[RMDB]
RNA sequence: GGGAACGACUCGAGUAGAGUCGAAAAGUACGUACAGCGCAGUACGCGCAGCAGAGGCCCUGCGCUACUGAUCAUACUCGGCGCCUCGAUCUGUCGAUCGUGCGCUGGCCCGUACGGAUCUCGCAGGGUUGCCCUAUGUCUUCGGACAUAGGGCAACAAAAGAAACAACAACAACAAC
Reactivity to DMS in 0.01 (KOAc 150mM, MgCl2 10mM, bicine 150mM(pH8.5), 24C), signal-to-noise 1, nucleotides 027 to 126: g020u000a090c060g040u010a050c070a140g000c130g000c030a100g030u000a000c180g000c000g050c010a030g000c140a190g010a130g000g010c030c060c000u020g000c010g000c220u000a000c060u000g000a080u000c060a170u000a070c090u000c060g000g000c060g020c000c060u010c020g000a050u010c020u000g000u000c130g000a000u000c000g000u000g000c010g030c020u000g000g000c080c000c050g010u000a010c100g000g000a090u000c070u010c030g020c070a040g020g010
Reactivity to 2A3 in 0.01 (KOAc 150mM, MgCl2 10mM, bicine 150mM(pH8.5), 24C), signal-to-noise 1, nucleotides 027 to 126: g050u060a010c050g040u040a030c080a040g030c030g020c090a000g040u060a010c100g030c010g020c010a010g030c030a040g080a160g170g000c070c000c000u040g020c000g020c020u110a060c030u010g030a050u120c030a060u050a130c080u060c100g000g000c000g040c000c060u090c000g000a080u030c030u140g300u170c100g060a010u000c000g060u000g030c020g040c030u000g030g080c010c040c000g010u020a000c030g000g010a020u020c040u090c050g010c090a110g130g030

Source: RMDB library OK2TRN, as collected in RNAgym. An RNA of 177 nucleotides, treated with DMS and 2A3 and read out base by base. The DMS profile rests on 1,138 reads. DMS adducts were read by reverse transcription with MarathonRT. The RNA was probed in 150 mM KOAc, 10 mM MgCl2 and 150 mM bicine (pH 8.5) at 24 C.